[RMDB]
RNA sequence: GGGAACGACUCGAGUAGAGUCGAAAAGAGAAGUAAACUGUUAGCCGCCAGCGCCUUGACCCGCUGUGGCCGCGGCGGCCUAGUUGAGACUGAAACGGCGGGUAAGAGCUCGGAGAGACCGAGCAGACCGUGAUCGGGUAUUCGUACCCGAUCACGGAAAAGAAACAACAACAACAAC
Reactivity to 2A3 in 0.01 (KOAc 150mM, MgCl2 10mM, bicine 150mM(pH8.5), 24C), signal-to-noise 1, nucleotides 027 to 126: g130a030g070a120a000g030u270a130a130a040c080u080g090u270u160a030g010c000c000g000c000c000a000g080c010g000c010c000u020u090g060a040c000c010c000g000c010u010g000u000g000g000c020c000g030c020g010g000c000g000g050c020c000u070a020g000u040u120g040a060g000a060c060u050g000a120a000a000c010g000g000c010g020g060g000u000a000a000g000a000g000c000u000c010g010g000a170g000a000g030a180c000c000g000a000g000c010a000g030a000